[RMDB]
RNA sequence: GGGAACGACUCGAGUAGAGUCGAAAAUGCGAGGGGGGCCUUGUCUCUGGUCCCUCUCAAGUUGAGGGGGGGCCGUAUCCGUGGCCAGGAACGCGUGGCCCUGGGGCCGUUCUGCCAUUGUCCUGCCGCUGGGACUUGUAUUCGUACAAGUCCCAGCAAAAGAAACAACAACAACAAC
Reactivity to DMS in 0.01 (KOAc 150mM, MgCl2 10mM, bicine 150mM(pH8.5), 24C), signal-to-noise 1, nucleotides 027 to 126: u000g020c300g000a030g000g010g000g000g020g010c020c000u000u000g000u010c140u000c100u000g040g020u000c000c010c000u000c000u000c000a010a190g000u000u000g030a190g000g000g050g020g020g010g010c030c020g020u000a070u000c030c050g080u000g000g000c000c110a050g000g010a060a110c210g000c120g080u020g000g000c050c060c060u010g010g010g010g000c030c020g040u000u000c020u040g010c040c070a140u000u000g010u000c010c010u000g020c150c100
Chemical mapping of a 177-nucleotide RNA with DMS. The RNA was probed in 150 mM KOAc, 10 mM MgCl2 and 150 mM bicine (pH 8.5) at 24 C. Reactivities are given for positions 27 through 126.